Source: RMDB libraries RFM100 and RFMREP, as collected in RNAgym.
The record gives the reactivity of an RNA of 177 nucleotides to 2A3 and DMS.
The reactions ran in a buffer of 150 mM KOAc, 10 mM MgCl2 and 150 mM bicine (pH 8.5), at 24 C.

RNA sequence: GGGAACGACUCGAGUAGAGUCGAAAAUGGGAUUUGGGCGAAGGCUCAGAUCUCCUGGUCACUAGAAUGGAGGGAUCCGCAUGAGGCUGGUUUUACAGAGCAGUGAACACUUCCUUCUCUUGACAGUUAUUAGUCCCAAAUUCGUUUGGGACUAAUAAAAAGAAACAACAACAACAAC
Reactivity to 2A3 in 0.01 (KOAc 150mM, MgCl2 10mM, bicine 150mM(pH8.5), 24C), signal-to-noise 9, nucleotides 027 to 126: u080g010g000g000a000u010u000u010g010g000g000c050g100a190a030g270g000c010u000c000a000g010a000u000c010u040c000c010u090g060g010u020c000a010c010u010a010g020a050a040u220g060g010a020g020g020g030a070u040c030c050g030c080a150u090g030a040g130g060c020u030g010g070u130u150u080u110a090c040a010g040a020g060c020a010g010u020g100a070a010c070a020c110u020u010c000c000u000u010c010u000c000u000u010g010a010c000a020g010u010
Reactivity to DMS in 0.01 (KOAc 150mM, MgCl2 10mM, bicine 150mM(pH8.5), 24C), signal-to-noise 6, nucleotides 027 to 126: u020g010g000g000a020u010u000u000g000g000g000c010g020a190a100g020g010c000u000c000a000g010a000u000c010u020c010c070u020g010g020u000c010a020c020u000a020g010a020a030u030g020g010a040g000g000g010a130u030c180c140g000c040a100u010g010a160g010g010c010u010g000g000u020u030u040u030a130c040a030g000a060g000c020a100g000u010g010a070a060c300a200c010u000u000c000c020u000u010c000u000c010u000u000g010a030c040a080g020u010